The record gives the reactivity of an RNA of 177 nucleotides to DMS and 2A3. Reactivities are given for positions 27 through 126. The reactions ran in a buffer of 150 mM KOAc, 10 mM MgCl2 and 150 mM bicine (pH 8.5), at 24 C. The DMS profile rests on 1,270 reads. For DMS the reverse transcriptase was MarathonRT. 2A3 adducts were read by reverse transcription with SuperScript II with manganese.
[RMDB]
RNA sequence: GGGAACGACUCGAGUAGAGUCGAAAACUAUCAGGAAGAAAAGGGCCCGAAACGCGCGCGAAAGUCUAAUGACGAAUAUACGAAAGGGCCCGAAAGUAUAUGAAAAGCGCGCGGAAACUGAUAGGAAGGGUUAUCAUAAGUUCGCUUAUGAUAACCCAAAAGAAACAACAACAACAAC
Reactivity to DMS in 0.01 (KOAc 150mM, MgCl2 10mM, bicine 150mM(pH8.5), 24C), signal-to-noise 1, nucleotides 027 to 126: c000u000a010u000c000a030g000g000a290a190g000a090a110a040a250g000g000g000c000c090c000g000a060a120a250c000g000c000g000c010g000c000g080a080a110a190g000u000c000u050a190a170u060g010a030c060g000a100a040u000a000u010a020c000g040a100a040a250g000g000g040c000c090c050g000a000a000a130g000u000a020u000a020u040g000a080a180a020a300g000c000g000c010g000c000g000g000a040a020a160c000u000g000a000u000a000g000g000a120a080
Reactivity to 2A3 in 0.01 (KOAc 150mM, MgCl2 10mM, bicine 150mM(pH8.5), 24C), signal-to-noise 2, nucleotides 027 to 126: c000u000a030u000c000a000g030g150a130a000g070a120a290a070a090g000g010g000c010c000c000g000a040a060a000c010g010c010g000c000g010c020g070a210a060a030g010u000c020u290a220a280u300g000a000c000g020a050a010u020a000u000a000c000g020a090a060a010g010g000g020c020c000c000g000a000a000a000g000u000a020u000a000u060g120a030a030a000a060g000c000g000c010g000c000g000g000a010a010a000c020u020g000a000u000a010g000g040a070a000